Structure probing data (2A3) for a 207-nucleotide construct. For 2A3, 535 sequencing reads were counted.

RNA sequence: GGGAACGACUCGAGUAGAGUCGAAAAGCUCCUUUGCGCUUUUUUUUCGGAUUAGGCGUGGAGGCGAAAGUCACCCUCCUCGCAUCGCAAGUUCGUGGUUGCGACUUACACGUAGGGCGAGGGGUGGAAAACAGUAUGGGAUUCGUCCCAUACUGAACAUUAGUUCCCGCUUCGGCGGGAACUAAUGAAAAGAAACAACAACAACAAC
Reactivity to 2A3 in 0.01 (KOAc 150mM, MgCl2 10mM, bicine 150mM(pH8.5), 24C), signal-to-noise 1, nucleotides 027 to 156: g060c010u090c010c000u060u000u050g000c000g090c000u070u020u030u020u010u010u020u160c090g140g040a010u030u040a020g020g000c010g000u020g000g000a010g060g000c060g020a120a020a000g110u080c060a060c010c000c000u010c000c000u000c000g000c020a020u010c040g020c030a010a060g000u130u130c020g020u090g140g120u100u270g060c020g000a010c010u050u070a020c070a000c070g150u080a110g000g120g000c000g000a010g000g020g010g000u190g000g070a150a130a000a040c000a000g010u000a000u010g010g060g000a020u010u190c160g120u030c030c000c000a000u000a000c000u000g000a000a010